Conditions: 150 mM KOAc, 10 mM MgCl2 and 150 mM bicine (pH 8.5), 24 C. This 207-nucleotide RNA was probed chemically with 2A3 and DMS.
RNA sequence: GGGAACGACUCGAGUAGAGUCGAAAAGCGCAAAUCCACAAACGCCAACGAUGAGCGUUUCGCUGUAGCCGCUUAAGGCAACAGCCGGGGCCGCCUGAGCCCUGCUACCAAAGACGGCUGGCGGGGGUAAUUACUUAUUGCUUCGGCAAUAAGUAAAUACGAAUAGUAGUUUCGACUACUAUUCGUAAAAAGAAACAACAACAACAAC
Reactivity to 2A3 in 0.01 (KOAc 150mM, MgCl2 10mM, bicine 150mM(pH8.5), 24C), signal-to-noise 4, nucleotides 027 to 156: g020c020g000c040a040a060a060u060c070c020a070c060a100a130a010c050g010c030c020a110a040c100g120a140u120g020a030g020c010g010u020u060u090c040g000c010u020g010u070a040g020c010c010g040c200u240u220a130a110g010g000c010a050a010c000a030g000c000c020g000g000g000g000c020c090g010c010c020u030g010a010g010c000c000c000u010g010c020u070a060c010c010a040a000a000g020a030c040g010g030c030u060g030g030c030g000g000g000g020g000u050a080a090u060u000a010c000u000u000a000u000u000g000c010u030u040c180g090g000c000a000a000u000a000a010g000u000a000a000a000
Reactivity to DMS in 0.01 (KOAc 150mM, MgCl2 10mM, bicine 150mM(pH8.5), 24C), signal-to-noise 2, nucleotides 027 to 156: g000c040g000c030a090a080a060u010c030c080a110c040a040a220a030c020g020c020c010a090a240c150g000a110u000g010a250g010c020g000u000u000u000c060g030c040u020g020u000a090g030c020c000g000c220u010u020a090a210g020g010c000a040a040c000a020g000c010c040g000g000g030g030c000c030g000c060c060u000g000a150g000c010c010c020u000g010c020u000a090c060c030a060a140a150g010a160c300g030g000c030u000g000g020c010g020g010g030g030g020u010a060a130u000u000a010c020u040u000a010u000u000g020c000u000u010c300g050g000c000a020a000u000a000a010g010u000a000a000a140
For 2A3 the reverse transcriptase was SuperScript II with manganese. Values cover nucleotides 27 to 156.